Description
Source: RMDB library OK1LIB, as collected in RNAgym. Chemical mapping of a 177-nucleotide RNA with DMS and 2A3. DMS adducts were read by reverse transcription with MarathonRT.
RNA sequence: GGGAACGACUCGAGUAGAGUCGAAAACUAUUUAUAGACAGAACAGUGGAAAACGUAUAUCGCUAUAAACCUUAUACCCCGAUUCUUCCAGUCGUACGAUUCCACAUAGGCGAGGCAUAAGCGAAAGGAUACUGAUAAUAUUCGUAUUAUCAGUAUCAAAAGAAACAACAACAACAAC
Reactivity to DMS in 0.01 (KOAc 150mM, MgCl2 10mM, bicine 150mM(pH8.5), 24C), signal-to-noise 8, nucleotides 027 to 126: c030u010a080u020u010u020a050u010a070g010a090c080a130g010a100a080c130a100g010u020g000g000a050a040a100a080c080g020u010a050u020a080u010c060g000c020u010a060u010a050a060a080c080c060u010u000a060u020a080c030c020c020c020g000a100u010u000c070u010u000c050c040a060g000u010c050g030u010a040c060g010a150u000u000c020c000a030c070a070u020a060g010g010c040g020a040g000g020c060a050u020a050a070g000c050g000a070a110a090g000
Reactivity to 2A3 in 0.01 (KOAc 150mM, MgCl2 10mM, bicine 150mM(pH8.5), 24C), signal-to-noise 9, nucleotides 027 to 126: c010u020a060u030u120u050a140u080a030g080a030c060a040g080a180a010c030a050g030u060g050g050a080a080a050a020c020g020u020a060u010a020u130c020g000c040u030a020u090a110a080a030c010c000u070u100a060u080a110c010c010c000c020g050a060u070u020c020u080u000c030c010a030g030u040c010g010u040a030c030g030a040u050u000c010c010a020c020a050u070a030g050g010c030g020a030g020g020c030a050u060a140a050g030c040g080a100a020a010g120